The record gives the reactivity of an RNA of 207 nucleotides to 2A3. As a SHAPE reagent, 2A3 marks flexible, mostly unpaired nucleotides at the ribose 2'-OH.

RNA sequence: GGGAACGACUCGAGUAGAGUCGAAAAACGGAUGGUACGCCAUCCGACCAUUGGGUAGAAGCGUUCAAUCAGCACCGUGACGGUGCAGAUGGGAAAUUGCCCAUGAUACGCACCAUACGUUGUGCGAAAAAGCCAUCGGUGUUCGCACCGAUGGCAACCGAUAGUGGUACUUCGGUACCACUAUCGGAAAAGAAACAACAACAACAAC
Reactivity to 2A3 in 0.01 (KOAc 150mM, MgCl2 10mM, bicine 150mM(pH8.5), 24C), signal-to-noise 2, nucleotides 027 to 156: a000c010g040g000a000u010g000g010u070a030c290g030c040c000a000u010c000c000g000a020c000c000a140u070u040g020g020g010u010a050g000a170a000g040c090g030u130u120c040a070a090u010c000a040g000c020a000c000c020g110u260g280a160c210g010g020u010g000c000a000g000a000u030g000g080g000a080a000a130u090u060g020c010c000c010a000u020g060a030u030a020c020g000c000a010c040c040a060u150a300c080g060u150u220g040u080g000c020g030a100a030a000a010a000g010c000c000a000u000c000g010g080u030g000u070u050c180g020c060a000c000c000g000a000u000g020g000c000a000a000